Structure probing data (DMS and 2A3) for a 177-nucleotide construct. DMS adducts were read by reverse transcription with MarathonRT. The data come from the RNA Mapping Database (RMDB), library OK1LIB. The reactions ran in a buffer of 150 mM KOAc, 10 mM MgCl2 and 150 mM bicine (pH 8.5), at 24 C.

[RMDB]
RNA sequence: GGGAACGACUCGAGUAGAGUCGAAAAUUAAAUGACCAAGGAUUUAGUUGUUAUGCACCGAAUUAUCCAGGUCAUGGUUUACUGUUGAAAGAUUUCAUGACAUAUAAUGUAGAUGAUUGGUGGGAAGAUUAGAAACCUCAUUCGUGAGGUUUCUAAUAAAAGAAACAACAACAACAAC
Reactivity to DMS in 0.01 (KOAc 150mM, MgCl2 10mM, bicine 150mM(pH8.5), 24C), signal-to-noise 3, nucleotides 027 to 126: u020u060a080a070a060u020g030a130c000c000a130a100g000g000a080u010u020u030a180g020u000u010g010u000u010a090u020g000c000a010c020c000g030a050a030u000u000a020u010c000c020a110g010g010u000c020a000u010g010g000u010u000u000a060c040u010g020u010u050g010a120a160a030g020a040u000u000u010c000a020u020g000a000c010a070u040a090u050a100a050u020g010u050a070g000a020u000g000a000u000u000g010g000u000g000g000g000a120a080g010
Reactivity to 2A3 in 0.01 (KOAc 150mM, MgCl2 10mM, bicine 150mM(pH8.5), 24C), signal-to-noise 2, nucleotides 027 to 126: u160u170a040a000a010u130g000a020c030c020a040a080g080g000a200u160u180u220a140g010u030u010g000u030u000a000u110g130c000a000c000c030g190a010a010u010u010a000u000c000c000a010g010g000u000c000a000u000g000g000u030u070u010a300c060u030g250u160u180g050a200a170a080g060a060u000u010u000c010a000u000g030a020c000a000u130a060u120a100a140u130g060u110a080g000a010u060g010a000u140u000g050g010u010g030g020g080a040a000g020